[RMDB]
RNA sequence: GGGAACGACUCGAGUAGAGUCGAAAAAUGAGAGAACGAAGUUGCCGGGCAUCACACCGCCGCAAUGCAACAUUUCCCUCAGCCACAUUUUGGGAAAUCAUCAAAUCCACUAAAGGCAUGACAGCAAGAUCUUUCCAGUUUUCGAACUGGAAAGAUCAAAAGAAACAACAACAACAAC
Reactivity to 2A3 in 0.01 (KOAc 150mM, MgCl2 10mM, bicine 150mM(pH8.5), 24C), signal-to-noise 5, nucleotides 027 to 126: a000u150g000a050g000a000g010a120a040c140g050a130a030g000u050u030g030c050c040g000g010g020c020a080u120c020a070c020a020c040c050g010c020c020g020c100a020a040u100g000c010a030a000c010a050u040u030u000c000c010c000u010c030a030g040c020c030a100c050a120u040u080u050u110g010g040g000a020a060a060u130c070a020u030c000a070a010a140u020c020c000a070c080u170a070a060a040g040g010c030a040u090g040a040c040a040g060c020a120a070
Reactivity to DMS in 0.01 (KOAc 150mM, MgCl2 10mM, bicine 150mM(pH8.5), 24C), signal-to-noise 3, nucleotides 027 to 126: a040u020g020a180g010a050g000a040a060c150g050a050a220g010u000u000g000c010c150g000g000g010c050a100u050c100a110c250a140c120c060g030c020c050g110c050a060a050u050g000c030a040a060c200a080u000u000u000c000c010c020u010c040a060g000c100c050a080c120a000u000u000u030u060g020g050g000a020a000a040u030c120a130u030c130a000a010a070u070c020c060a050c070u030a120a090a100g000g000c060a040u000g000a000c030a060g000c140a090a130